[RMDB]
RNA sequence: GGGAACGACUCGAGUAGAGUCGAAAAACAAUCAACGACAGCCGCCGACCAGCAGGCAUUUAUGGAAUGGUGUGCAACUACAUGUGACCAAGAAACCCUCGAGAAAUGGCUCGAAGACAACCCAGAAGACAUUCAGAACAAGUUACGCACGAAACGCGCUAGGCGAAGGAUUCGUCCUUCGCCUAGCAAAAGAAACAACAACAACAAC
Reactivity to 2A3 in 0.01 (KOAc 150mM, MgCl2 10mM, bicine 150mM(pH8.5), 24C), signal-to-noise 1, nucleotides 027 to 156: a000c070a000a030u080c000a030a050c080g160a100c080a060g000c000c050g030c020c010g090a160c030c030a030g170c020a030g000g000c140a070u170u100u040a180u170g000g020a150a000u000g000g040u050g000u070g010c070a050a020c020u080a070c060a040u180g000u010g090a100c050c050a060a000g020a050a000a000c020c000c000u080c050g070a080g020a010a140a010u010g000g000c020u000c010g020a030a030g030a020c030a020a000c010c000c000a020g010a000a000g010a010c000a080u070u100c070a000g140a170a010c030a040a040g050u130u140a030c010g000c010a000c120g170a130a090a070c040g000c000